[RMDB]
RNA sequence: GGGAACGACUCGAGUAGAGUCGAAAAGGUUCAUUUGACAAAGUCUAUGAUAUUGGCAAUCCUAAAGGAAUUCCUAUUGUUGAUGACCCUGUGGUUGAUUGGCAUUAUUUUGAUGCACAGCCCUUGAGAUUGUUAUUCUGUUCGCAGAAUAACAAUCAAAAGAAACAACAACAACAAC
Reactivity to 2A3 in 0.01 (KOAc 150mM, MgCl2 10mM, bicine 150mM(pH8.5), 24C), signal-to-noise 3, nucleotides 027 to 126: g010g000u030u030c010a020u040u040u220g010a030c020a040a130a010g030u000c030u040a100u160g030a060u110a060u160u080g020g000c020a030a040u030c000c010u140a110a040a070g040g000a040a060u060u030c010c000u040a100u080u060g020u000u050g020a050u010g040a070c010c010c030u050g040u060g070g010u030u050g050a210u050u140g070g000c000a000u000u060a070u060u290u100u230g010a010u010g000c020a010c000a020g050c000c030c040u040u020g020a040
Reactivity to DMS in 0.01 (KOAc 150mM, MgCl2 10mM, bicine 150mM(pH8.5), 24C), signal-to-noise 5, nucleotides 027 to 126: g010g010u000u000c020a050u010u000u010g020a020c020a080a080a210g010u000c040u000a060u010g010a090u010a080u000u000g000g010c120a060a090u010c040c020u010a050a070a100g010g000a070a130u000u000c030c030u000a100u000u000g010u000u000g010a030u000g010a090c060c010c030u000g020u000g010g020u000u000g000a120u010u010g020g010c000a010u000u000a120u010u000u010u010g000a020u000g010c020a110c050a060g000c040c020c040u000u000g000a300
An RNA of 177 nucleotides, treated with 2A3 and DMS and read out base by base. Conditions: 150 mM KOAc, 10 mM MgCl2 and 150 mM bicine (pH 8.5), 24 C.